[RMDB]
RNA sequence: GGGAACGACUCGAGUAGAGUCGAAAAGAUAUGGAAACCCAGGACAUGCGAUGUCGGAAACGACCUCGCAACAGCCUGUGGUUUCCUAAGUCAAAUCUUACGUCAUCGUUCGCGAUGACGUAAGAAAGGAUUUAGAUACCUUCGGGUAUCUAAAUCCAAAAGAAACAACAACAACAAC
Reactivity to DMS in 0.01 (KOAc 150mM, MgCl2 10mM, bicine 150mM(pH8.5), 24C), signal-to-noise 2, nucleotides 027 to 126: g000a030u000a210u010g010g020a020a000a050c000c000c000a020g000g000a090c130a200u010g000c000g010a010u010g000u000c000g010g000a060a040a100c010g020a000c010c070u000c010g000c000a010a040c300a150g000c020c010u000g010u010g030g000u000u000u000c000c000u000a010a080g010u000c040a100a160a170u000c000u000u000a000c000g000u000c000a010u000c000g000u000u020c200g010c000g000a010u000g000a000c000g020u000a000a000g000a000a050a080
Reactivity to 2A3 in 0.01 (KOAc 150mM, MgCl2 10mM, bicine 150mM(pH8.5), 24C), signal-to-noise 1, nucleotides 027 to 126: g000a010u020a000u060g010g000a000a010a000c000c000c020a010g050g020a140c110a170u040g010c020g000a010u010g010u010c010g010g010a030a020a010c010g000a010c010c000u020c010g000c010a030a020c050a000g070c010c000u040g010u300g010g030u000u020u000c000c000u000a000a010g010u030c010a080a060a190u020c000u010u010a000c010g000u000c000a000u010c000g080u050u070c290g000c000g190a010u020g000a020c010g010u000a000a000g000a020a010a000
Background: Chemical mapping of a 177-nucleotide RNA with DMS and 2A3. 2A3 adducts were read by reverse transcription with SuperScript II with manganese. The RNA was probed in 150 mM KOAc, 10 mM MgCl2 and 150 mM bicine (pH 8.5) at 24 C.